This 177-nucleotide RNA was probed chemically with DMS.
In probing experiments dimethyl sulfate is read out at A N1 and C N3, which are open when not base-paired.
Reactivities are given for positions 27 through 126.
RNA sequence: GGGAACGACUCGAGUAGAGUCGAAAAAAAAGCUAUUAAUGUUUUGAGAGAAUUCAGGAAAGAGAUUGAAAGGAUGCUGAACGUCUUGAAUAGGAGACGCAGAUCUGCAGGCAUGAUCAUUAUGCUGCGCCAUUUUAAUCUUCGGAUUAAAAUGGCGAAAAGAAACAACAACAACAAC
Reactivity to DMS in 0.01 (KOAc 150mM, MgCl2 10mM, bicine 150mM(pH8.5), 24C), signal-to-noise 1, nucleotides 027 to 126: a020a040a000a030g020c020u000a140u000u020a050a140u000g000u010u000u020u010g020a200g020a210g000a100a100u040u020c030a110g000g000a020a020a170g010a080g000a040u010u000g000a080a070a090g020g020a050u000g000c030u000g050a090a090c050g000u000c020u000u000g020a170a070u020a160g000g000a010g000a020c020g020c040a020g010a050u000c030u000g020c010a110g030g000c000a010u000g020a090u000c100a030u000u010a020u010g030c070u000g000